[RMDB]
RNA sequence: GGGAACGACUCGAGUAGAGUCGAAAAGAGCGCUUCCAGGGCCGGGCGGGUACUGGUUGACGCCGCCGGCGAUGGCGUCUUGGGCGGCCUGCAGCAUCUUCGGCGGGCCGUCCUCGUCGGGAAAGCCCUUUUCAUCCCAAUUCGUUGGGAUGAAAAGAAAAGAAACAACAACAACAAC
Reactivity to 2A3 in 0.01 (KOAc 150mM, MgCl2 10mM, bicine 150mM(pH8.5), 24C), signal-to-noise 2, nucleotides 027 to 126: g030a010g000c040g000c030u020u030c020c000a060g140g040g010c000c040g110g170g300c140g070g000g040u120a090c030u140g180g000u110u100g030a070c050g050c020c030g000c020c000g000g000c050g060a070u110g030g040c020g030u050c060u020u060g020g000g000c010g010g000c000c010u020g000c000a050g060c040a140u110c090u280u160c110g060g000c000g000g030g000c010c000g000u030c000c000u000c000g000u020c010g000g000g030a060a100a020g020c020c000
Reactivity to DMS in 0.01 (KOAc 150mM, MgCl2 10mM, bicine 150mM(pH8.5), 24C), signal-to-noise 3, nucleotides 027 to 126: g000a120g030c060g020c050u010u000c000c020a090g010g020g010c010c030g010g010g020c100g010g000g020u000a040c070u000g000g010u010u000g000a120c050g020c000c020g010c000c010g010g010c020g000a110u000g000g000c060g020u000c050u000u000g020g020g000c010g010g020c010c000u000g020c020a100g020c190a120u000c170u000u000c120g020g010c010g010g010g000c010c010g010u000c010c000u000c030g010u000c030g010g010g000a090a090a130g010c020c030